Overview:
The data come from the RNA Mapping Database (RMDB), library RFM100. Structure probing data (2A3 and DMS) for a 177-nucleotide construct. The RNA was probed in 150 mM KOAc, 10 mM MgCl2 and 150 mM bicine (pH 8.5) at 24 C. 2A3 adducts were read by reverse transcription with SuperScript II with manganese. High 2A3 reactivity points to a flexible backbone, as in loops and unpaired stretches. DMS adducts were read by reverse transcription with MarathonRT.
RNA sequence: GGGAACGACUCGAGUAGAGUCGAAAAGCACCGAAGCCAAGCCCCGGUAAACGGCGGCCGUAACUAUAACGGUCCUAAGGUAGCGAAAUUCCUUGUCGGGUAAGUUCCGACCUGCACGAAAGGCGCAGUGUAGCGAGGUAUUCGUACCUCGCUACACAAAAGAAACAACAACAACAAC
Reactivity to 2A3 in 0.01 (KOAc 150mM, MgCl2 10mM, bicine 150mM(pH8.5), 24C), signal-to-noise 4, nucleotides 027 to 126: g040c010a000c010c000g060a110a000g000c010c070a020a010g010c000c000c010c020g060g010u060a120a130a010c040g050g000c090g020g020c000c000g000u030a060a060c060u030a050u110a300a020c000g000g040u090c000c020u060a060a040g070g000u030a050g010c010g030a040a000a070u020u020c010c000u010u060g020u000c020g000g000g010u080a110a060g090u150u050c000c000g020a010c000c020u100g030c050a050c100g090a120a050a050g100g000c020g000c040a010
Reactivity to DMS in 0.01 (KOAc 150mM, MgCl2 10mM, bicine 150mM(pH8.5), 24C), signal-to-noise 2, nucleotides 027 to 126: g000c130a120c030c030g000a140a030g020c000c040a070a120g000c030c020c030c040g000g000u010a060a050a170c060g000g040c090g000g040c010c030g010u060a060a150c150u020a160u070a120a120c070g000g030u010c040c010u010a050a060g030g090u000a040g000c070g000a040a040a050u040u020c000c020u060u000g050u000c000g000g000g000u060a060a090g020u000u070c000c010g000a020c000c070u000g040c020a010c030g000a000a060a110g010g000c000g040c030a170